[RMDB]
RNA sequence: GGGAACGACUCGAGUAGAGUCGAAAAGCCACUGCCUUCGGGCAGUGGCAAAAGAAAGCGAUUUCUGACCGCUUUUUAGACAGAAAAAGAUCGAAAGAUCAAAAACGUCAGACUUCGGUCUGACGAACAUAAUCCCUAAGUUCGCUUAGGGAUUAUGAAAAGAAACAACAACAACAAC
Reactivity to 2A3 in 0.01 (KOAc 150mM, MgCl2 10mM, bicine 150mM(pH8.5), 24C), signal-to-noise 2, nucleotides 027 to 126: g000c000c020a020c000u020g020c020c000u050u070c200g050g000g030c000a000g030u000g010g000c010a030a010a000a000g020a030a050a000g000c000g010a030u010u130u000c030u050g040a030c010c000g000c010u110u020u010u030u040a050g000a030c020a010g110a050a070a000a040a020g010a010u000c010g010a100a030a020g030a000u020c040a000a080a000a020a060c020g010u000c000a000g000a010c010u030u060c190g060g000u000c000u010g000a000c000g000a010a000
Reactivity to DMS in 0.01 (KOAc 150mM, MgCl2 10mM, bicine 150mM(pH8.5), 24C), signal-to-noise 3, nucleotides 027 to 126: g010c000c010a000c010u000g010c010c010u010u020c230g050g000g050c010a010g030u000g000g000c000a000a000a060a090g010a050a070a010g010c020g010a300u000u000u000c100u000g000a040c020c000g000c000u020u000u000u020u010a050g000a150c040a090g000a060a050a080a110a110g010a010u000c000g000a100a050a170g000a020u010c010a040a080a050a080a150c030g000u000c000a010g000a030c000u010u020c190g020g000u000c000u000g000a000c000g000a050a060
Conditions: 150 mM KOAc, 10 mM MgCl2 and 150 mM bicine (pH 8.5), 24 C. Chemical mapping of a 177-nucleotide RNA with 2A3 and DMS. The data come from the RNA Mapping Database (RMDB), library M2PK50.